[RMDB]
RNA sequence: GGGAACGACUCGAGUAGAGUCGAAAAAAUUGUAUCAGAGCGGCCUGAAACUACCACAGAGAUCAAAAAGGAGGGAGGCUGUGCUGAGAACGUUUUCAGGCUCUCAGUUCUCAGCUUUUUAUUCAACAAUUUUCACCACUUUCGAGUGGUGAAAAUUAAAAGAAACAACAACAACAAC
Reactivity to DMS in 0.01 (KOAc 150mM, MgCl2 10mM, bicine 150mM(pH8.5), 24C), signal-to-noise 1, nucleotides 027 to 126: a000a120u010u000g000u030a130u060c080a040g020a000g010c140g000g010c000c020u010g010a000a010a080c060u000a210c210c010a180c040a100g020a130g000a110u060c230a080a010a120a020a070g010g010a060g000g000g000a110g000g010c060u000g010u040g020c000u000g000a040g000a040a040c110g000u030u010u010u040c060a130g000g000c080u000c000u000c040a110g010u000u000c000u010c000a110g000c010u000u000u050u010u030a090u050u010c020a040a090c250
Reactivity to 2A3 in 0.01 (KOAc 150mM, MgCl2 10mM, bicine 150mM(pH8.5), 24C), signal-to-noise 1, nucleotides 027 to 126: a000a000u140u250g040u010a050u070c010a000g000a090g010c000g000g010c000c000u060g060a160a040a010c040u080a150c000c010a030c000a050g020a000g030a070u050c090a010a090a070a050a000g060g000a040g030g040g010a010g000g010c000u000g050u030g150c030u000g000a010g000a040a030c000g000u000u000u030u100c140a040g090g000c000u000c010u000c000a000g000u000u000c000u000c010a010g000c000u130u040u000u100u060a110u010u000c030a010a030c010
An RNA of 177 nucleotides, treated with DMS and 2A3 and read out base by base. For DMS the reverse transcriptase was MarathonRT. For 2A3, 637 sequencing reads were counted. In probing experiments dimethyl sulfate is read out at A N1 and C N3, which are open when not base-paired. The data come from the RNA Mapping Database (RMDB), library RFM100.